Source: RMDB library 15KLIB, as collected in RNAgym. Chemical mapping of a 170-nucleotide RNA with 2A3 and DMS. DMS adducts were read by reverse transcription with MarathonRT. 2A3 is a SHAPE reagent: it acylates the 2'-hydroxyl of flexible nucleotides of all four kinds. The DMS profile rests on 35,457 reads.
RNA sequence: GGGAACGACUCGAGUAGAGUCGAAAAGAUUUUCGAGGAAAUACUCCCAAGAAGUUCCCGGAGGGAUCCAAGAGACGGAUGACUUUCCCCCAUUGGUUGGGAAAAGUCCCGGAACCAGGAAAUGGGAUGCCCACAUUCUUCGGAAUGUGGAAAAGAAACAACAACAACAAC
Reactivity to 2A3 in 0.01 (KOAc 150mM, MgCl2 10mM, bicine 150mM(pH8.5), 24C), signal-to-noise 9, nucleotides 027 to 129: g050a010u070u080u020u040c020g010a030g010g060a040a110a040u070a130c040u010c020c020c010a000a030g070a030a010g010u020u010c000c000c000g000g030a040g000g020g010a030u040c020c020a050a020g050a020g030a110c020g010g010a050u150g010a060c000u030u010u010c020c040c000c010c020a090u110u290g140g030u130u100g000g020g000a020a070a010a010g020u000c000c000c020g010g010a020a020c040c010a010g020g080a020a050a070u100g030g000g020a020u090g040c000
Reactivity to DMS in 0.01 (KOAc 150mM, MgCl2 10mM, bicine 150mM(pH8.5), 24C), signal-to-noise 8, nucleotides 027 to 129: g010a130u000u000u020u020c030g010a090g010g030a090a120a110u040a060c070u000c020c100c110a080a080g010a080a190g010u000u010c020c010c020g030g010a090g000g000g000a050u020c040c040a090a130g010a090g020a140c020g020g020a040u010g000a030c000u000u000u000c000c020c030c080c040a230u050u050g000g000u010u000g000g000g000a020a020a010a020g030u000c000c000c040g010g010a070a090c080c040a060g020g050a040a060a080u060g000g020g010a080u020g000c120